[RMDB]
The record gives the reactivity of an RNA of 177 nucleotides to DMS and 2A3.
The DMS profile rests on 16,803 reads.
RNA sequence: GGGAACGACUCGAGUAGAGUCGAAAACACUGUGUUAACAGCUUUCUGCGUGUGGCUGGGAGGCGAAUCUCUUCUUCAAGCUCAGGUUUGCUUUUGCUGUGCUGCCCUCGCCUUGCACUCAGUGGUGUACCGAAAAUCAAUUCGUUGAUUUUCGGUAAAAAGAAACAACAACAACAAC
Reactivity to DMS in 0.01 (KOAc 150mM, MgCl2 10mM, bicine 150mM(pH8.5), 24C), signal-to-noise 7, nucleotides 027 to 126: c060a070c030u000g010u000g010u000u010a110a110c090a060g010c060u000u010u000c060u000g020c120g020u000g040u000g010g010c010u000g010g010g000a060g000g020c020g000a040a060u000c040u000c050u000u000c050u010u010c160a080a090g010c090u000c070a050g010g010u000u000u000g010c050u000u000u000u000g000c030u010g010u000g010c050u000g000c050c030c030u000c070g010c020c040u000u000g010c160a070c020u000c040a050g020u000g000g010u010g020
Reactivity to 2A3 in 0.01 (KOAc 150mM, MgCl2 10mM, bicine 150mM(pH8.5), 24C), signal-to-noise 5, nucleotides 027 to 126: c020a010c010u030g010u010g050u220u190a120a040c020a050g000c000u080u200u070c030u100g040c020g010u130g050u090g040g000c020u050g030g050g030a050g030g000c020g050a040a060u050c050u000c000u180u020c020u090u110c090a060a000g020c020u020c060a060g080g000u050u080u080g060c010u080u080u100u130g060c040u060g030u080g050c030u040g010c010c010c020u010c020g000c020c010u020u080g000c030a010c020u020c010a020g010u030g060g050u070g050
Source: RMDB library OK2TST, as collected in RNAgym.
Reactivities are given for positions 27 through 126.